[RMDB]
RNA sequence: GGGAACGACUCGAGUAGAGUCGAAAAAACAUAAAACCACGAGAUAAGACUAACGACGGGUUUUUGCGUGAGCUUUUUAACGAAUGUAGUGACGUCGUCGAGAAGGUGAGUUACGAUCUAGGUGAGACAUCCAUUACCCAUUCGUGGGUAAUGGAUGAAAAGAAACAACAACAACAAC
Reactivity to DMS in 0.01 (KOAc 150mM, MgCl2 10mM, bicine 150mM(pH8.5), 24C), signal-to-noise 4, nucleotides 027 to 126: a070a060c120a100u010a050a030a030a090c030c000a060c040g000a130g020a090u000a080a060g000a050c040u000a100a100c030g000a040c050g000g010g000u010u000u010u000u000g010c000g010u000g000a100g000c060u000u010u010u010u010a050a090c080g000a130a030u000g010u000a050g020u000g010a070c050g010u010c010g010u000c050g010a110g010a090a090g010g000u000g010a080g010u000u000a100c120g000a080u000c040u000a080g020g000u000g010a110g000a140
Reactivity to 2A3 in 0.01 (KOAc 150mM, MgCl2 10mM, bicine 150mM(pH8.5), 24C), signal-to-noise 2, nucleotides 027 to 126: a030a000c120a020u250a020a090a020a060c050c010a020c090g080a090g040a140u100a080a020g090a070c030u020a060a010c050g070a010c020g000g050g000u060u050u010u030u110g020c020g000u020g020a070g000c100u000u120u090u140u290a090a000c040g050a140a030u100g010u070a030g020u040g040a010c030g060u070c010g020u030c010g040a040g070a080a020g090g010u100g040a040g010u010u080a000c020g010a030u050c040u070a050g100g070u020g010a020g010a010